[RMDB]
RNA sequence: GGGAACGACUCGAGUAGAGUCGAAAAGAUAUGGACAGAAUAGGACAUGCCUAUCGGAAACGAUCAGGCAACAGCCUACUGUCCUAAGUCAAACUAUGGGACUAACCUUCGGGUUAGUCCCAUAGAAGAAUGCGUAAAGGUUCGCCUUUACGCAUUCAAAAGAAACAACAACAACAAC
Reactivity to 2A3 in 0.01 (KOAc 150mM, MgCl2 10mM, bicine 150mM(pH8.5), 24C), signal-to-noise 1, nucleotides 027 to 126: g030a020u050a030u130g010g000a010c030a000g090a220a300u100a080g030g020a030c070a130u040g000c010c010u010a000u030c000g030g050a040a050a020c010g000a020u080c230a040g000g000c030a040a020c030a030g050c020c000u020a020c010u020g000u010c000c010u000a050a010g010u000c030a060a010a080c000u000a000u000g000g000g000a000c000u000a000a010c010c020u050u110c300g000g000g020u010u000a010g010u020c000c000c000a000u010a000g000a000a000
Reactivity to DMS in 0.01 (KOAc 150mM, MgCl2 10mM, bicine 150mM(pH8.5), 24C), signal-to-noise 3, nucleotides 027 to 126: g000a040u000a300u000g000g010a000c000a010g000a140a120u020a010g020g010a050c090a180u000g000c000c000u000a070u000c020g020g000a080a060a160c020g010a000u000c230a000g000g010c010a020a030c240a100g000c000c000u010a030c010u000g000u000c000c000u000a020a040g010u000c030a070a120a260c010u000a000u000g000g000g010a030c010u000a010a010c010c010u000u020c240g020g030g010u000u010a010g000u010c000c000c000a000u000a000g000a100a100
This 177-nucleotide RNA was probed chemically with 2A3 and DMS. The RNA was probed in 150 mM KOAc, 10 mM MgCl2 and 150 mM bicine (pH 8.5) at 24 C. The 2A3 profile rests on 2,460 reads. DMS adducts were read by reverse transcription with MarathonRT.